[RMDB]
RNA sequence: GGGAACGACUCGAGUAGAGUCGAAAAAUUUAAGGGCCAGGACGGUCACCUUUGGGGUGGUGACAAGUGUGAUCACUUGGGUGGUGGCUGUGUUUGCGGAUCUCCCAGGAAUCUCGUUUACCAGAUCACCAUAUAUGAGUUUCGACUCAUAUAUGGUAAAAGAAACAACAACAACAAC
Reactivity to 2A3 in 0.01 (KOAc 150mM, MgCl2 10mM, bicine 150mM(pH8.5), 24C), signal-to-noise 9, nucleotides 027 to 126: a000u200u250u180a090a060g010g010g010c040c030a020g050g020a020c030g020g000u010c010a020c010c000u070u100u140g060g020g010g010u100g010g030u050g020a020c010a040a070g120u100g030u050g170a120u180c010a010c000u020u030g080g000g030u060g030g020u010g010g000c000u000g020u020g040u060u080u090g030c020g010g020a020u010c010u000c030c010c010a010g030g050a030a040u040c030u010c050g040u040u060u050a160c020c010a030g010a100u110c040
Reactivity to DMS in 0.01 (KOAc 150mM, MgCl2 10mM, bicine 150mM(pH8.5), 24C), signal-to-noise 5, nucleotides 027 to 126: a090u030u020u030a080a090g020g000g010c040c050a070g010g010a090c070g000g000u000c030a030c010c010u000u030u010g000g010g000g000u010g010g010u010g000a050c030a120a070g020u030g010u010g010a130u020c020a030c040u010u000g000g000g010u010g000g010u010g000g000c010u000g020u020g000u010u000u000g020c070g000g000a050u010c040u000c000c000c010a150g000g000a070a060u020c060u010c020g000u000u000u000a100c040c030a070g010a090u030c120